[RMDB]
RNA sequence: GGGAACGACUCGAGUAGAGUCGAAAAGCGAACGUUGGAAAAGAAAAGUAGAAAGCUGGGUAAGACUCACCUGGCGACUCGUCGUCGACGAAGGGUCCUCAGCAGAGCACCGGCAGAGGCGCUAUGCGGUAAACUAUGAGUUCGCUCAUAGUUUACCAAAAGAAACAACAACAACAAC
Reactivity to 2A3 in 0.01 (KOAc 150mM, MgCl2 10mM, bicine 150mM(pH8.5), 24C), signal-to-noise 2, nucleotides 027 to 126: g010c020g000a030a050c050g030u150u140g090g030a090a110a140a120g050a050a180a070a070g100u100a060g100a110a170a000g010c010u030g040g050g000u050a090a030g040a040c010u000c030a040c030c000u020g010g030c020g010a010c020u010c050g070u000c000g070u080c080g080a220c030g020a090a040g040g000g000u000c020c010u010c010a000g010c050a020g000a000g040c000a010c020c000g030g000c020a030g010a030g160g000c030g010c050u060a070u070g120c080
Reactivity to DMS in 0.01 (KOAc 150mM, MgCl2 10mM, bicine 150mM(pH8.5), 24C), signal-to-noise 4, nucleotides 027 to 126: g000c040g010a040a040c060g010u000u000g000g000a060a070a100a140g000a080a070a080a090g020u010a090g010a110a200a230g010c020u000g010g000g010u000a040a070g010a130c030u010c030a100c270c020u010g000g000c220g000a020c040u000c120g020u000c040g030u000c130g010a070c050g010a060a060g010g010g010u000c000c020u000c060a040g020c120a100g000a030g020c010a060c020c010g000g010c070a030g000a080g010g010c030g000c050u000a050u010g020c200
About this RNA:
The data come from the RNA Mapping Database (RMDB), library VIROID. Chemical mapping of a 177-nucleotide RNA with 2A3 and DMS. Values are in units of 0.01, from 0 to 300, in steps of 10. DMS (dimethyl sulfate) methylates the pairing face of unpaired adenines and cytosines. For 2A3, 1,943 sequencing reads were counted. The RNA was probed in 150 mM KOAc, 10 mM MgCl2 and 150 mM bicine (pH 8.5) at 24 C. For DMS, 2,780 sequencing reads were counted.